[RMDB]
RNA sequence: GGGAACGACUCGAGUAGAGUCGAAAAGGCGGGACGCAGAGACAGGGGAGCGGCUGGUGUGCGCCCAGUGCCCCCCAGGCACCUUUGUGCAGCGGCCGUGCCGCCGAGACAGCCCCACGACGUGUGGCCCGUGUCCACCGCGCCACUACACGCAGUACAUGGUUUUAUUAUUCGUAAUAAAACCAUGAAAAGAAACAACAACAACAAC
Reactivity to 2A3 in 0.01 (KOAc 150mM, MgCl2 10mM, bicine 150mM(pH8.5), 24C), signal-to-noise 3, nucleotides 027 to 156: g000g050c010g010g010g040a010c000g000c040a040g040a030g060a170c090a100g020g000g020g020a080g020c040g030g000c050u000g000g050u140g020u100g080c080g050c030c000c010a000g010u030g010c010c010c000c000c010c000a050g060g000c000a020c020c060u050u110u300g020u030g010c050a040g050c050g070g000c090c010g000u000g080c000c010g000c000c000g010a030g020a010c060a030g050c000c000c000c010a050c030g090a050c080g010u050g000u010g050g000c020c050c030g020u020g010u100c030c030a070c070c020g010c020g000c000c010a010c000u110a030c020a010c060g070c050a010g160u280a020
Reactivity to DMS in 0.01 (KOAc 150mM, MgCl2 10mM, bicine 150mM(pH8.5), 24C), signal-to-noise 1, nucleotides 027 to 156: g020g020c030g030g070g030a020c010g050c040a130g000a140g010a140c100a190g030g020g030g020a080g000c010g000g040c020u000g000g000u010g020u000g030c130g030c220c010c010a010g000u000g020c050c000c000c030c020c020a050g020g000c020a050c080c130u020u010u000g020u000g020c020a120g000c030g010g000c120c070g070u000g000c050c020g000c000c020g010a120g010a130c040a090g010c070c000c020c030a150c030g000a050c000g000u000g010u000g020g000c000c060c100g030u020g000u010c070c110a120c090c010g010c020g000c030c030a070c020u000a070c050a050c000g010c000a130g010u000a200